The record gives the reactivity of an RNA of 177 nucleotides to DMS and 2A3. Values cover nucleotides 27 to 126. For 2A3 the reverse transcriptase was SuperScript II with manganese. Source: RMDB library OK2TRN, as collected in RNAgym. For DMS, 2,331 sequencing reads were counted.
RNA sequence: GGGAACGACUCGAGUAGAGUCGAAAAUAGCUAUACGCGUAGCUAGCAUCGGCUAAUUACGCGAUCGAUUAGCCGUAGCUACGGCCGAUCGGCAUUAGCGCAUCGAUGCUACGUAAUAUUAGCCGUAUCUCUCAAUCCCUUUCGAGGGAUUGAGAGAAAAAGAAACAACAACAACAAC
Reactivity to DMS in 0.01 (KOAc 150mM, MgCl2 10mM, bicine 150mM(pH8.5), 24C), signal-to-noise 3, nucleotides 027 to 126: u000a080g010c000u000a010u000a070c230g020c070g000u000a000g000c040u010a120g000c130a060u000c090g000g000c000u000a000a010u000u000a040c160g020c060g000a020u000c010g000a130u000u010a150g000c000c000g000u000a140g050c250u010a030c000g000g000c020c010g010a000u000c000g030g010c220a070u000u000a000g020c030g020c130a110u010c120g000a070u010g010c020u000a010c000g020u020a040a150u000a100u010u000a010g020c010c050g020u000a090
Reactivity to 2A3 in 0.01 (KOAc 150mM, MgCl2 10mM, bicine 150mM(pH8.5), 24C), signal-to-noise 2, nucleotides 027 to 126: u030a000g010c020u030a000u020a090c140g000c030g040u000a000g000c010u000a020g050c050a040u050c050g050g040c000u000a000a010u050u060a100c130g000c020g190a060u010c010g020a040u130u180a020g000c000c000g050u030a070g140c140u240a020c010g020g000c040c010g000a020u030c010g040g000c040a030u040u010a000g000c050g000c090a090u080c030g070a030u100g000c000u000a010c010g010u010a010a060u100a040u160u090a010g010c010c020g090u090a190